[RMDB]
RNA sequence: GGGAACGACUCGAGUAGAGUCGAAAAUCUACGAGUCGGCCAUAGAUGCUGUGGCCGAUGUGCAGGAUGGUGCCCAGAUCCUGUUCGGCGGAUUCGGAAUCUGCGGCAUUCCGGAGAAGAUGAUCAAGUGACCAGGACCAUUCGUGGUCCUGGUCACAAAAGAAACAACAACAACAAC
Reactivity to 2A3 in 0.01 (KOAc 150mM, MgCl2 10mM, bicine 150mM(pH8.5), 24C), signal-to-noise 1, nucleotides 027 to 126: u210c110u160a060c020g000a030g130u000c000g000g100c000c000a000u010a010g300a140u300g120c070u000g000u000g030g050c080c010g000a000u060g000u040g060c110a090g000g110a000u010g000g140u140g000c090c010c000a000g000a010u000c000c000u000g000u030u000c040g020g030c170g000g000a070u000u000c000g000g100a030a100u020c030u200g180c150g060g030c000a000u020u020c000c000g170g000a110g010a060a060g000a030u070g000a000u190c140a050a100